[RMDB]
RNA sequence: GGGAACGACUCGAGUAGAGUCGAAAAGAUAUGGACGACACUGAGGACAUGCUAAUUCGGAAACGAGAUAGCAACAGCCUUUGUCGUCCUAAGUCAAAAUCACAUUGCUCUUCGGAGCAAUGUGAAACUAGAAAAUAGGCUUCGGCCUAUUUUCUAGAAAAGAAACAACAACAACAAC
Reactivity to DMS in 0.01 (KOAc 150mM, MgCl2 10mM, bicine 150mM(pH8.5), 24C), signal-to-noise 2, nucleotides 027 to 126: g020a010u000a140u020g000g000a020c010g020a010c010a010c300u020g020a050g040g010a170c170a090u000g000c000u000a000a090u000u000c000g020g020a060a020a050c000g020a000g000a050u000a000g020c010a030a130c230a140g010c030c000u000u010u000g000u000c010g010u000c000c000u000a000a040g000u000c020a080a070a040a120u010c000a000c000a000u000u000g000c000u000c000u010u020c110g040g000a010g000c010a000a000u000g010u000g000a000a030a100
Reactivity to 2A3 in 0.01 (KOAc 150mM, MgCl2 10mM, bicine 150mM(pH8.5), 24C), signal-to-noise 2, nucleotides 027 to 126: g000a000u030a000u050g000g000a020c010g000a010c010a000c130u170g130a210g250g170a150c020a130u020g000c010u030a100a090u060u000c010g000g000a020a010a010c000g010a000g000a050u000a030g060c010a040a120c120a210g250c000c000u010u030u020g020u010c010g000u000c010c000u010a010a010g000u000c000a000a080a030a230u020c010a000c000a010u000u000g000c010u010c020u020u140c300g170g020a000g000c000a010a000u000g000u000g000a000a010a000